The record gives the reactivity of an RNA of 207 nucleotides to 2A3.
RNA sequence: GGGAACGACUCGAGUAGAGUCGAAAAUGCCUAAUUCAAGGAAUUAGCGUGCCUUCAUGCUAAGAGUUUGAUAUCUGCUAAAACCCGGUGCAUUCAUCAAUGCAGGUUAAGCCAAAGGGAUGUCCCGAAAAGAACGCAAGGUUCGCCUUGCGUUCAAGUGCUCCAACUAGUUCGCUAGUUGGAGCACAAAAGAAACAACAACAACAAC
Reactivity to 2A3 in 0.01 (KOAc 150mM, MgCl2 10mM, bicine 150mM(pH8.5), 24C), signal-to-noise 1, nucleotides 027 to 156: u060g020c000c000u020a080a110u020u020c040a030a080g060g070a110a010u050u000a010g020c030g030u040g020c040c140u280u300c080a000u040g010c000u060a050a010g050a040g110u000u050u080g080a070u070a090u000c110u170g000c000u060a020a060a050a060c020c000c020g230g030u040g020c010a000u000u080c010a070u030c050a050a130u040g000c000a000g080g000u000u030a010a000g000c020c060a050a060a050g060g020g000a030u040g040u060c040c010c010g010a040a060a000a130g030a000a000c000g000c010a020a000g030g000u040u110c100g130c020c000u000u020g000c020g000u000u000c000a030a000
Values are in units of 0.01, from 0 to 300, in steps of 10. Conditions: 150 mM KOAc, 10 mM MgCl2 and 150 mM bicine (pH 8.5), 24 C.